RNA sequence: GGGAACGACUCGAGUAGAGUCGAAAAAGCUUGCCGCCGCCAACCGGGAGGAAUGGCAGGAAAAGACGACGGACCUCUCGCACUGCCAGGCGAAACGCAUGCGGUUCAAACUUCGCACCGAUGCGUACAUACUGAUCGCAUUCGUGCGAUCAGUAUGAAAAGAAACAACAACAACAAC
Reactivity to DMS in 0.01 (KOAc 150mM, MgCl2 10mM, bicine 150mM(pH8.5), 24C), signal-to-noise 4, nucleotides 027 to 126: a100g000c050u000u000g020c060c030g020c090c030g010c070c060a100a140c130c040g000g000g020a060g010g000a110a100u000g000g000c030a060g000g020a070a100a070a080g000a090c060g020a070c070g020g010a250c060c050u000c030u010c040g000c120a140c090u000g000c030c020a100g000g020c020g000a070a110a040c020g020c020a020u000g000c000g010g000u010u000c040a060a080a100c220u010u000c140g000c130a050c030c010g000a030u000g000c020g000u000a130
Reactivity to 2A3 in 0.01 (KOAc 150mM, MgCl2 10mM, bicine 150mM(pH8.5), 24C), signal-to-noise 3, nucleotides 027 to 126: a010g030c040u040u040g020c020c010g010c000c010g030c040c010a030a080c070c010g070g020g010a040g050g000a130a110u090g030g010c030a030g020g080a040a160a000a020g100a020c110g010a010c040g060g000a020c030c010u000c010u010c020g000c010a050c060u050g000c010c020a030g060g030c060g040a090a090a000c010g020c010a000u210g260c010g020g000u030u020c040a080a150a190c160u240u160c130g000c020a000c000c010g000a010u000g000c000g010u000a010